[RMDB]
RNA sequence: GGGAACGACUCGAGUAGAGUCGAAAAGAUGACUUCCAGGACUGUUAUGGAACACUAUGCGAGUUAACAUAACGUUGACUCAAGGCAAGUGAAGCAUGGUGUUCCACUUGCCUUUGUCACUGGAAGAGAUAGUUUACGUGUUCGCACGUAAGCUAUCAAAAGAAACAACAACAACAAC
Reactivity to DMS in 0.01 (KOAc 150mM, MgCl2 10mM, bicine 150mM(pH8.5), 24C), signal-to-noise 9, nucleotides 027 to 126: g010a140u030g000a160c010u000u000c000c000a010g000g000a030c020u010g000u020u020a070u010g000g010a010a010c020a010c000u000a020u010g000c040g000a090g020u000u000a020a020c010a120u020a120a140c220g000u000u000g010a020c010u000c030a070a080g010g010c130a050a060g020u010g010a090a160g010c000a030u010g000g000u000g000u000u000c010c000a000c040u010u010g000c050c210u020u020u020g000u000c000a100c000u000g000g000a010a000g000a000
Reactivity to 2A3 in 0.01 (KOAc 150mM, MgCl2 10mM, bicine 150mM(pH8.5), 24C), signal-to-noise 9, nucleotides 027 to 126: g170a090u230g040a040c000u000u000c000c000a000g010g020a020c030u070g040u160u120a050u110g010g010a020a000c010a010c020u030a020u080g030c060g040a020g020u000u020a020a010c020a040u200a140a050c160g010u010u020g010a000c000u020c060a030a030g090g000c080a060a060g050u100g200a070a020g010c010a020u080g040g010u060g020u030u000c000c000a000c000u020u070g010c000c000u120u100u110g060u000c090a090c020u000g000g000a000a000g000a000

An RNA of 177 nucleotides, treated with DMS and 2A3 and read out base by base. For 2A3, 99,905 sequencing reads were counted. It was measured as part of the RMDB library OK1LIB. High 2A3 reactivity points to a flexible backbone, as in loops and unpaired stretches. Values cover nucleotides 27 to 126. Conditions: 150 mM KOAc, 10 mM MgCl2 and 150 mM bicine (pH 8.5), 24 C.